[RMDB]
RNA sequence: GGGAACGACUCGAGUAGAGUCGAAAAGAGCGACACGGCACCCAUCGACCAUCGAUACCGGGGAUGUGUCCCUUCCACGGAUGCUGAUAGCGCAGGAUGGUCUUGAGCUUCUGCUGGAGCUUGUCGAGAACGGUGAGAGAUUCGUCUCUCACCGUUCAAAAGAAACAACAACAACAAC
Reactivity to DMS in 0.01 (KOAc 150mM, MgCl2 10mM, bicine 150mM(pH8.5), 24C), signal-to-noise 2, nucleotides 027 to 126: g000a070g010c020g000a050c040a060c100g010g040c090a110c030c030c100a090u020c120g000a040c020c010a010u000c000g030a070u010a110c070c010g000g000g000g030a030u020g030u040g000u040c120c010c030u020u020c000c030a100c050g000g000a080u000g020c000u020g010a130u050a100g060c070g010c150a080g010g000a030u000g000g000u010c000u050u020g000a060g000c040u040u030c070u010g010c090u000g000g040a180g010c020u000u030g020u010c030g000a260
Reactivity to 2A3 in 0.01 (KOAc 150mM, MgCl2 10mM, bicine 150mM(pH8.5), 24C), signal-to-noise 4, nucleotides 027 to 126: g090a020g040c080g020a020c010a010c030g020g000c020a040c010c000c000a020u050c050g020a020c020c000a040u050c000g120a040u080a200c010c030g020g000g030g000a020u040g170u050g080u070c010c000c010u050u000c010c000a030c000g010g000a030u080g010c030u100g080a190u210a140g050c030g010c060a040g100g000a030u020g030g000u010c000u020u110g040a020g000c000u050u020c010u070g060c050u060g010g010a040g020c030u070u050g030u060c090g000a090